[RMDB]
RNA sequence: GGGAACGACUCGAGUAGAGUCGAAAACAGGUCGGUGCUCCAGCAAAGACUAUGAUUUAUCAAAGGUUCUCUUCAGAACUCUACAGAGACCAGAAGAAAGCAUUAGGAUAGAUGAUCUGGAAUUAUAAUAUCACCGCUAUUUCGAUAGCGGUGAUAUAAAAGAAACAACAACAACAAC
Reactivity to DMS in 0.01 (KOAc 150mM, MgCl2 10mM, bicine 150mM(pH8.5), 24C), signal-to-noise 2, nucleotides 027 to 126: c030a090g020g030u000c010g030g010u000g020c090u020c050c080a150g000c060a080a110a070g000a020c050u000a100u020g000a060u000u000u000a070u000c010a090a200a140g000g020u000u000c000u000c040u000u000c020a050g010a120a180c030u000c050u030a070c230a160g020a050g000a080c090c090a040g000a040a090g000a030a070a050g000c020a030u010u000a070g010g000a070u000a050g000a030u010g010a050u000c040u000g000g010a070a130u010u000a070u000a080
This 177-nucleotide RNA was probed chemically with DMS. The DMS profile rests on 1,015 reads. The RNA was probed in 150 mM KOAc, 10 mM MgCl2 and 150 mM bicine (pH 8.5) at 24 C. In probing experiments dimethyl sulfate is read out at A N1 and C N3, which are open when not base-paired.